[RMDB]
RNA sequence: GGGAACGACUCGAGUAGAGUCGAAAAACAGUUGACGAUUAAGGUGAUUGACGCCGACCUCGAACCAGUGGCAAACGCGCCGGUCACAAUCGACGGUAAAACCAGAUAUACCGAGGAAAACGGCAAACGCAUUACGUCGAUUCGUCGACGUAAUGCGAAAAGAAACAACAACAACAAC
Reactivity to DMS in 0.01 (KOAc 150mM, MgCl2 10mM, bicine 150mM(pH8.5), 24C), signal-to-noise 1, nucleotides 027 to 126: a050c060a080g000u000u030g000a160c010g000a000u000u000a100a120g000g050u000g000a130u000u000g010a030c080g010c000c030g000a090c000c020u000c030g040a080a100c160c110a100g000u000g000g000c010a020a100a040c230g000c030g000c000c000g020g000u000c110a000c020a060a000u000c040g000a100c030g000g000u000a060a110a020a100c080c010a150g000a200u000a290u000a100c100c010g050a050g000g020a000a030a120a130c090g030g000c210a000a050a090
This 177-nucleotide RNA was probed chemically with DMS. The RNA was probed in 150 mM KOAc, 10 mM MgCl2 and 150 mM bicine (pH 8.5) at 24 C. Source: RMDB library OK2TST, as collected in RNAgym. For DMS, 544 sequencing reads were counted. For DMS the reverse transcriptase was MarathonRT.